Conditions: 150 mM KOAc, 10 mM MgCl2 and 150 mM bicine (pH 8.5), 24 C.
An RNA of 207 nucleotides, treated with 2A3 and read out base by base.
For 2A3 the reverse transcriptase was SuperScript II with manganese.
For 2A3, 712 sequencing reads were counted.

[RMDB]
RNA sequence: GGGAACGACUCGAGUAGAGUCGAAAAUCGAGAACGCCGUUCAGCCGGUCGCUGACCGCGUGGCGCAGGCGCAGGCGAUCGCCGAACGCGCCGACGAAAUCGUGUCCACCGCGGCGCGCGUGACCGGACACGUCAAGCAGGUGACCGACGUCGCCGAGCCUAACUCCUAUUUCGAUAGGAGUUAGGCAAAAGAAACAACAACAACAAC
Reactivity to 2A3 in 0.01 (KOAc 150mM, MgCl2 10mM, bicine 150mM(pH8.5), 24C), signal-to-noise 1, nucleotides 027 to 156: u100c020g000a000g010a100a050c020g080c020c040g120u070u060c020a010g000c000c000g000g030u000c000g000c110u080g060a150c000c000g000c000g000u020g010g010c000g000c020a040g000g010c020g000c020a000g000g030c010g150a090u130c090g020c000c010g030a190a070c110g000c050g000c000c040g010a050c140g140a080a010a060u220c110g000u010g060u070c000c000a030c050c130g000c020g000g100c010g000c010g040c000g040u030g040a090c030c040g000g010a000c000a000c010g050u080c090a030a040g050c040a000g070g000u010g000a000c030c090g090a100c160g040u080c000g000c010c000g000a020